The record gives the reactivity of an RNA of 177 nucleotides to 2A3 and DMS. In probing experiments dimethyl sulfate is read out at A N1 and C N3, which are open when not base-paired. The DMS profile rests on 2,806 reads. The RNA was probed in 150 mM KOAc, 10 mM MgCl2 and 150 mM bicine (pH 8.5) at 24 C. DMS adducts were read by reverse transcription with MarathonRT. It was measured as part of the RMDB library 15KREP. 2A3 adducts were read by reverse transcription with SuperScript II with manganese.

RNA sequence: GGGAACGACUCGAGUAGAGUCGAAAACGUUAAUUCCCAAGAUGUCUAUAAGAGUCUUACCAUAGUUGACAUUCCACAGAGUUUGACUUUUUCAUAUGAUGGGUUACGUGGCGCAAUACGUAAAGCUCGGAUUAUUAUAGUUCGCUAUAAUAAUCCGAAAAGAAACAACAACAACAAC
Reactivity to 2A3 in 0.01 (KOAc 150mM, MgCl2 10mM, bicine 150mM(pH8.5), 24C), signal-to-noise 4, nucleotides 027 to 126: c010g000u020u080a010a050u100u030c000c000c010a010a010g080a070u150g040u000c020u050a100u020a190a000g010a000g020u020c010u000u010a020c010c000a060u070a090g050u010u040g050a040c040a110u100u080c030c010a060c030a060g080a040g060u020u020u050g010a010c000u030u040u010u070u050c050a040u110a050u200g050a030u060g070g030g050u020u040a010c020g000u030g050g010c070g000c070a040a070u060a120c010g050u030a030a040a070g030c020u010
Reactivity to DMS in 0.01 (KOAc 150mM, MgCl2 10mM, bicine 150mM(pH8.5), 24C), signal-to-noise 4, nucleotides 027 to 126: c130g020u020u010a090a180u010u000c000c000c010a150a140g000a060u000g000u010c030u020a060u000a050a130g000a040g010u000c020u010u000a080c020c020a110u010a080g020u000u010g010a120c140a130u000u000c040c040a050c090a100g010a070g010u000u010u010g010a060c070u000u000u000u000u000c130a070u000a050u000g010a070u000g010g000g010u000u000a040c100g030u000g000g010c110g010c120a060a040u000a030c070g010u000a040a070a130g010c120u000